[RMDB]
RNA sequence: GGGAACGACUCGAGUAGAGUCGAAAACACAUUCCUAAAUCCUUCGCCUGGGCCAAUCUGCUAGACAGCUGAGCGGAAUUCUCUUGCUUGUCCCAGGACAAGUAGAGAAUGUGGAAGUGAUAAUCCAACUGACCAUCACGUUCGCGUGGUGGUCAGUAAAAGAAACAACAACAACAAC
Reactivity to 2A3 in 0.01 (KOAc 150mM, MgCl2 10mM, bicine 150mM(pH8.5), 24C), signal-to-noise 2, nucleotides 027 to 126: c070a000c000a180u010u000c000c000u020a040a010a130u070c030c000u050u050c060g010c010c000u050g000g030g000c030c000a020a030u010c010u010g000c020u010a030g030a110c010a010g030c020u030g010a020g000c000g000g000a010a010u020u000c010u010c000u000u090g020c010u000u000g010u000c000c010c020a010g020g000a000c000a000a020g000u010a000g000a000g000a000a010u020g000u030g020g030a030a010g030u000g060a070u050a060a030u010c010c020a000
Reactivity to DMS in 0.01 (KOAc 150mM, MgCl2 10mM, bicine 150mM(pH8.5), 24C), signal-to-noise 3, nucleotides 027 to 126: c120a030c110a130u000u000c000c000u000a080a060a120u020c040c030u010u000c090g010c020c050u030g000g000g020c000c060a080a110u010c030u010g000c030u010a060g010a100c160a070g020c020u000g000a070g020c170g000g010a060a040u000u000c010u000c010u010u020g030c020u000u000g000u000c010c010c120a140g020g000a000c020a000a000g030u000a000g000a060g030a010a000u010g020u010g000g020a050a020g020u010g000a090u010a070a100u010c020c040a120